[RMDB]
RNA sequence: GGGAACGACUCGAGUAGAGUCGAAAAGAAUGUUCAUACUUCGGUAUGAACAUUCAAAAACCGUAGGCUCCAGUAAGGGAGCUCCUUCGAAAGAGGAGAGCGACGAUCUUACGAGCCUAAACGGAAAAAGUUAGCGGAUCUUCGGAUCCGCUAACAACAUAACGCUCAUCUUCGGAUGAGCGUUAUGAAAAGAAACAACAACAACAAC
Reactivity to 2A3 in 0.01 (KOAc 150mM, MgCl2 10mM, bicine 150mM(pH8.5), 24C), signal-to-noise 1, nucleotides 027 to 156: g000a010a010u000g000u010u010c000a000u000a010c020u040u100c300g090g000u010a020u010g000a000a010c000a000u000u000c000a000a000a000a000a000c000c000g030u020a000g000g020c080u020c120c210a030g010u010a000a000g010g000g000a000g000c000u010c000c000u010u020c010g050a120a080a090g010a000g070g020a160g000a000g300c000g300a300c000g180a020u190c000u000u000a010c000g010a000g010c000c000u000a020a000a020c010g000g100a040a000a230a000a000g000u000u000a000g020c000g000g010a010u020c000u050u040c300g120g030a010u000c030c010g010c000u000a000a000c000a000a000
The record gives the reactivity of an RNA of 207 nucleotides to 2A3. As a SHAPE reagent, 2A3 marks flexible, mostly unpaired nucleotides at the ribose 2'-OH. The data come from the RNA Mapping Database (RMDB), library RNAMAK. The 2A3 profile rests on 725 reads. Conditions: 150 mM KOAc, 10 mM MgCl2 and 150 mM bicine (pH 8.5), 24 C.